Conditions: 150 mM KOAc, 10 mM MgCl2 and 150 mM bicine (pH 8.5), 24 C. Structure probing data (DMS and 2A3) for a 177-nucleotide construct.
[RMDB]
RNA sequence: GGGAACGACUCGAGUAGAGUCGAAAAGGUCCUCCAGAGCGCGCGCCACCAUCGCCAAAGCCAGGUCGGCCUCCGCUCGGCUGCCGCCUCUCUACUACCCAUUACAAUGCUCGCCCAAAGCGCGAUGGAGAGUGUAAUAGUUCGCUAUUACACUCUCAAAAGAAACAACAACAACAAC
Reactivity to DMS in 0.01 (KOAc 150mM, MgCl2 10mM, bicine 150mM(pH8.5), 24C), signal-to-noise 3, nucleotides 027 to 126: g000g010u000c030c020u000c050c040a100g000a110g020c070g020c050g010c180g020c030c070a090c060c030a060u010c070g000c050c060a050a100a090g000c040c040a130g010g010u010c060g000g010c030c020u000c120c030g020c040u000c040g010g000c030u000g010c030c060g000c040c010u000c030u010c030u010a080c080u000a090c020c010c030a130u010u000a120c160a060a100u010g000c050u000c030g000c010c040c040a050a080a070g000c030g000c110g010a110u000g010
Reactivity to 2A3 in 0.01 (KOAc 150mM, MgCl2 10mM, bicine 150mM(pH8.5), 24C), signal-to-noise 3, nucleotides 027 to 126: g010g020u030c010c010u000c010c030a070g000a010g060c050g000c010g000c020g000c010c000a020c010c020a090u090c050g040c040c020a090a070a000g040c020c020a030g040g010u050c050g020g030c000c010u040c020c020g040c020u040c030g010g010c010u020g020c010c000g000c000c000u010c000u010c010u020a070c020u070a070c010c010c010a060u110u040a040c040a100a100u160g020c020u010c020g050c000c010c030a080a100a030g070c090g010c030g030a020u110g120
DMS (dimethyl sulfate) methylates the pairing face of unpaired adenines and cytosines. It was measured as part of the RMDB library RFMREP. Values cover nucleotides 27 to 126.